RNA sequence: GGGAACGACUCGAGUAGAGUCGAAAAGUCAGCUUGUUCGCAAGCUGACAAACUGGACACACCCACACCGAGGCGAAGCCGUGUCAAAAUGGGUGUGGGUAAAAAGGACACUGUUCGCAGUGUCCAAGCCCUUCAUAUAGUUCGCUAUAUGAAGGGCAAAAGAAACAACAACAACAAC
Reactivity to 2A3 in 0.01 (KOAc 150mM, MgCl2 10mM, bicine 150mM(pH8.5), 24C), signal-to-noise 5, nucleotides 027 to 126: g010u000c000a000g000c010u020u010g040u080u170c190g010c130a000a000g010c000u000g000a000c000a000a010a000c000u040g160g040a010c020a000c010a010c110c000c000a000c000a000c010c020g100a050g030g020c120g080a130a040g080c050c050g080u090g100u150c100a110a090a030a130u140g100g000g000u010g010u010g010g000g010u020a040a020a000a010a010g000g000a000c000a000c000u010g010u040u060c190g020c130a000g000u000g000u010c000c000a010a000
Reactivity to DMS in 0.01 (KOAc 150mM, MgCl2 10mM, bicine 150mM(pH8.5), 24C), signal-to-noise 4, nucleotides 027 to 126: g000u000c000a000g010c000u000u000g000u000u020c200g010c000a010a000g000c000u000g010a000c020a000a050a070c090u000g010g020a090c120a070c150a050c000c000c010a030c020a010c000c010g020a130g010g010c050g000a120a100g030c040c050g000u000g000u000c150a060a040a110a140u010g010g000g010u000g020u000g000g000g020u000a010a020a020a070a030g010g000a000c000a000c010u000g000u000u020c200g010c010a000g010u000g000u000c010c010a030a040